Conditions: 150 mM KOAc, 10 mM MgCl2 and 150 mM bicine (pH 8.5), 24 C. The record gives the reactivity of an RNA of 177 nucleotides to 2A3 and DMS. The DMS profile rests on 1,247 reads. The data come from the RNA Mapping Database (RMDB), library TTRDEL. Reactivities are given for positions 27 through 126.
[RMDB]
RNA sequence: GGGAACGACUCGAGUAGAGUCGAAAAAAAAAAGAUAUGGAAUGAGUUGUCAGUUUGCGUGAUGACCUUCUUCGGAAACGAAGAAGCAAGCCUAAACUUGGAUUUACUCAUUCCUAAGUCAAAAAAACAUGAUCCAUUAGUUCGCUAAUGGAUCAUGAAAAGAAACAACAACAACAAC
Reactivity to 2A3 in 0.01 (KOAc 150mM, MgCl2 10mM, bicine 150mM(pH8.5), 24C), signal-to-noise 1, nucleotides 027 to 126: a000a000a000a000a000a000g060a010u080a080u090g000g000a000a000u020g000a020g000u000u050g000u050c030a030g000u040u050u020g050c060g070u060g150a300u170g040a100c010c010u000u000c000u000u010c010g000g000a050a060a060c010g000a000a010g040a010a000g010c000a010a060g000c000c030u040a050a000a000c030u060u150g110g020a050u230u140u180a000c000u000c000a010u000u060c000c000u010a060a020g020u040c040a040a040a040a000a000a000a120
Reactivity to DMS in 0.01 (KOAc 150mM, MgCl2 10mM, bicine 150mM(pH8.5), 24C), signal-to-noise 1, nucleotides 027 to 126: a010a030a060a060a070a080g000a000u000a300u000g010g000a010a000u000g000a010g030u000u000g000u000c010a050g010u000u000u010g010c300g000u010g010a070u010g000a080c300c010u000u000c000u000u000c000g000g010a030a040a130c000g020a030a020g000a000a000g000c000a040a120g020c010c020u010a010a000a010c010u000u010g030g010a010u000u000u000a010c000u010c000a020u000u000c020c000u010a020a040g000u020c000a030a000a050a050a070a080a100